An RNA of 207 nucleotides, treated with DMS and 2A3 and read out base by base.
RNA sequence: GGGAACGACUCGAGUAGAGUCGAAAAGCACUAGAGGGCGUAACGGCUGGGUGUAACCCAACUCUAGGUGUGCUGAUUAGCGGGCUUGACUCCGUAACAAAUAGGCACUGCUGGUAAAAAGCAUCCCUGACCAUAUACAUCUUCGGAUGUAUAUGAAGAUGUGAAGAGAGUUCGCUCUCUUCACAUCAAAAGAAACAACAACAACAAC
Reactivity to DMS in 0.01 (KOAc 150mM, MgCl2 10mM, bicine 150mM(pH8.5), 24C), signal-to-noise 4, nucleotides 027 to 156: g010c020a090c030u000a070g010a070g000g010g050c030g010u010a110a140c230g030g020c030u010g020g000g030u000g010u000a070a300c030c000c010a040a050c000u000c020u010a070g020g020u010g020u000g000c010u000g000a130u000u000a160g030c010g010g020g020c060u000u000g000a180c110u020c010c030g010u000a100a120c130a040a100a100u000a130g010g010c000a060c020u000g020c000u000g000g000u010a040a060a070a080a070g020c020a090u010c020c000c020u010g000a200c200c000a010u000a020u000a010c000a010u000c000u000u000c300g050g010a030u000g010u000a000u000a010u000g000a040a090
Reactivity to 2A3 in 0.01 (KOAc 150mM, MgCl2 10mM, bicine 150mM(pH8.5), 24C), signal-to-noise 5, nucleotides 027 to 156: g010c010a010c030u010a000g000a010g000g000g000c010g030u070a060a020c050g140g010c000u010g010g000g010u030g030u040a040a040c010c000c000a000a010c000u000c000u000a030g070g000u030g020u000g050c010u010g000a120u020u100a030g020c010g000g030g020c090u160u220g040a130c040u010c060c000g010u030a050a000c020a040a080a070u150a090g020g000c010a000c040u020g000c010u030g020g060u110a070a130a030a010a000g010c000a050u040c000c000c000u030g030a030c030c000a000u000a000u000a000c000a000u000c000u020u030c110g110g000a000u000g000u000a000u000a000u010g000a010a020